Source: RMDB libraries RFM100 and RFMREP, as collected in RNAgym. Structure probing data (2A3 and DMS) for a 177-nucleotide construct. For DMS the reverse transcriptase was MarathonRT.
RNA sequence: GGGAACGACUCGAGUAGAGUCGAAAAAGCUAGUCUCAGUUGGCAGUGUUCUACACACGGAAAGACUCAUGGGACGGUUAUCUCGACGAUUUGGCUAUCGAUUUGGCUGCCGACACUUGACGACUACCCCUAUUCCUGGUUUCGACCAGGAAUAGGGAAAAGAAACAACAACAACAAC
Reactivity to 2A3 in 0.01 (KOAc 150mM, MgCl2 10mM, bicine 150mM(pH8.5), 24C), signal-to-noise 7, nucleotides 027 to 126: a000g080c090u030a010g010u020c000u000c020a020g010u030u010g020g000c010a010g000u000g060u150u030c090u130a050c060a010c010a020c120g020g060a100a080a020g080a030c010u040c080a120u150g020g010g060a020c020g020g000u110u050a070u040c050u020c030g050a050c020g020a070u040u040u180g050g000c040u050a040u130c050g150a130u070u010u150g080g000c000u010g010c010c000g010a000c010a040c070u040u070g010a010c060g000a010c020u050a070c000
Reactivity to DMS in 0.01 (KOAc 150mM, MgCl2 10mM, bicine 150mM(pH8.5), 24C), signal-to-noise 3, nucleotides 027 to 126: a040g020c130u000a020g000u000c000u000c020a080g020u010u000g000g000c040a100g020u020g040u010u030c100u020a110c150a130c130a120c090g050g010a080a080a060g000a060c070u020c060a100u000g020g000g000a100c070g000g010u000u010a150u000c020u010c040g030a180c080g000a090u020u000u010g000g020c030u000a090u010c060g000a120u020u020u010g020g000c000u000g010c000c000g000a050c060a070c110u040u020g010a050c090g000a030c030u010a040c050